RNA sequence: GGGAACGACUCGAGUAGAGUCGAAAAAUGGCACUGCUACGGUGAACUUGACCGCUGCAGCUACCGGUCAGGGUGUUAACUGCAGGACCGAUAAGUGUGUAAUCAAGGUCUUUGGCGAUCACACUGAGCUCCAAAAAUGGUUCGCCAUUUUUGGAGCAAAAGAAACAACAACAACAAC
Reactivity to 2A3 in 0.01 (KOAc 150mM, MgCl2 10mM, bicine 150mM(pH8.5), 24C), signal-to-noise 1, nucleotides 027 to 126: a010u060g040g010c050a040c040u010g000c010u060a030c060g030g030u080g030a150a060c020u040u080g070a000c020c020g050c070u100g040c030a070g050c020u090a080c000c000g040g060u050c020a030g080g000g000u060g080u100u100a060a030c000u060g000c030a000g020g000a060c000c010g030a100u050a150a030g020u020g010u020g050u070a040a060u060c050a060a020g140g100u060c030u080u050u060g050g000c030g020a050u080c000a000c010a000c010u070g120a010
Reactivity to DMS in 0.01 (KOAc 150mM, MgCl2 10mM, bicine 150mM(pH8.5), 24C), signal-to-noise 2, nucleotides 027 to 126: a110u000g000g020c180a130c030u000g020c020u000a120c080g000g040u010g000a100a110c080u000u010g000a020c010c000g010c090u000g010c030a050g010c160u000a030c090c010g020g010u000c020a050g010g010g020u000g010u010u000a080a110c070u000g000c050a050g000g000a030c000c020g010a120u020a100a110g020u000g000u000g020u000a140a050u000c050a090a110g020g020u010c060u000u000u030g010g020c100g010a140u000c020a040c000a020c040u000g020a170